[RMDB]
RNA sequence: GGGAACGACUCGAGUAGAGUCGAAAACCGAAGAGGAAGAAGAGGACAUGGACGCGAACCGUGAGUGGAACCCUCGAUCCUUUAUUGGGGGGUACACUCGAGGAGUGGAAGGCGGGUAGGGGGGACCAAAUCGAGUAGUUCGCUACUCGAAAAAGAAACAACAACAACAAC
Reactivity to DMS in 0.01 (KOAc 150mM, MgCl2 10mM, bicine 150mM(pH8.5), 24C), signal-to-noise 8, nucleotides 027 to 129: c050c010g010a080a100g030a050g040g040a050a030g000a060a040g020a030g030g050a050c080a070u000g020g030a070c080g040c110g000a090a120c000c000g010u030g010a030g010u020g020g030a170a190c030c020c010u000c010g040a050u070c220c100u000u030u040a050u020u000g000g000g000g000g000g000u040a070c030a000c010u000c020g000a080g000g000a080g000u020g010g010a040a040g020g010c100g010g040g020u040a050g000g000g000g000g000g000a050c120c080a050a060a130
Reactivity to 2A3 in 0.01 (KOAc 150mM, MgCl2 10mM, bicine 150mM(pH8.5), 24C), signal-to-noise 9, nucleotides 027 to 129: c010c000g020a060a020g000a010g020g000a010a010g010a000a000g010a010g010g010a010c030a040u060g020g010a010c040g010c050g060a040a030c010c010g050u090g020a010g000u030g020g020a130a050c000c000c000u000c000g040a060u130c030c110u170u270u220a090u090u060g010g000g000g000g000g010u080a020c010a000c010u000c000g010a050g010g010a040g010u120g030g030a030a030g030g020c040g000g010g010u030a050g000g030g000g000g000g000a000c030c000a040a060a050
An RNA of 170 nucleotides, treated with DMS and 2A3 and read out base by base. 2A3 adducts were read by reverse transcription with SuperScript II with manganese. The data come from the RNA Mapping Database (RMDB), library 15KLIB. The RNA was probed in 150 mM KOAc, 10 mM MgCl2 and 150 mM bicine (pH 8.5) at 24 C. For DMS the reverse transcriptase was MarathonRT.